An RNA of 207 nucleotides, treated with 2A3 and DMS and read out base by base. Reactivities are given for positions 27 through 156. The DMS profile rests on 4,852 reads.
RNA sequence: GGGAACGACUCGAGUAGAGUCGAAAAUGCUGUCGUUGACAGCGCCCAACGCUUCACACCCUGAAAGAAGCGCCUGUUAUCAGGACGGUUGAUCCAUUUACCGGUGCAGACCUCUGCAAACACCGGGUUUAACAAGCAUCUUUCGAGAUGCUUGUAACUCCUUAAGAAGUUUCGACUUCUUAAGGAGAAAAGAAACAACAACAACAAC
Reactivity to 2A3 in 0.01 (KOAc 150mM, MgCl2 10mM, bicine 150mM(pH8.5), 24C), signal-to-noise 2, nucleotides 027 to 156: u090g000c010u000g000u010c040g300u080u260g010a010c000a000g000c000g000c000c000c000a020a030c030g000c010u020u020c020a100c020a040c130c000c000u010g010a030a020a000g010a010a000g000c000g000c000c040u130g010u140u120a150u300c010a010g010g010a010c010g000g040u030u050g060a080u070c050c050a050u090u020u150a050c000c000g010g000u000g010c000a020g080a300c030c160u250c020u100g050c030a020a140a010c030a000c010c000g010g040g000u010u110u000a020a000c000a000a000g000c000a000u000c000u010u090u080c120g030a010g000a050u000g010c000u000u010g010u000a000a020
Reactivity to DMS in 0.01 (KOAc 150mM, MgCl2 10mM, bicine 150mM(pH8.5), 24C), signal-to-noise 3, nucleotides 027 to 156: u000g010c000u000g010u000c020g060u000u020g050a050c010a020g010c010g020c100c030c020a080a050c020g020c010u000u000c020a250c090a170c030c050c000u000g010a100a190a210g020a040a000g010c010g000c020c090u010g000u000u010a160u000c060a080g000g000a130c070g010g020u000u000g010a200u000c070c040a200u010u010u000a170c020c010g020g020u000g000c010a090g000a230c120c090u020c110u010g030c060a210a120a050c010a030c010c000g010g000g030u000u000u000a080a060c010a000a000g000c000a000u000c010u000u010u010c290g010a040g010a020u000g010c000u020u000g010u000a020a130